This 177-nucleotide RNA was probed chemically with DMS.
Conditions: 150 mM KOAc, 10 mM MgCl2 and 150 mM bicine (pH 8.5), 24 C.
It was measured as part of the RMDB library OK2TST.
DMS adducts were read by reverse transcription with MarathonRT.
RNA sequence: GGGAACGACUCGAGUAGAGUCGAAAAACAGCCUGACUUACAAAUUCAUUUAGACAGUCUGGAAAAGGUGGGGGUUCUUCCCCUCUUUUUCUUUUAGGAGGGGUAGCUUGAGAAUUAGGCAUUGUAACAUAUACUAGGGCUUCGGCCCUAGUAUAUGAAAAGAAACAACAACAACAAC
Reactivity to DMS in 0.01 (KOAc 150mM, MgCl2 10mM, bicine 150mM(pH8.5), 24C), signal-to-noise 2, nucleotides 027 to 126: a110c060a120g020c010c000u010g010a050c040u000u010a110c110a060a080a110u010u010c140a080u010u000u020a110g020a130c110a030g000u000c040u000g020g000a060a050a060a070g000g020u000g020g000g030g010g010u000u010c120u010u010c010c000c000c010u000c000u000u020u000u010u000c030u000u000u000u000a050g000g000a040g000g010g000g000u000a030g010c090u000u010g000a160g010a050a060u000u000a050g000g010c040a080u000u010g000u020a080a240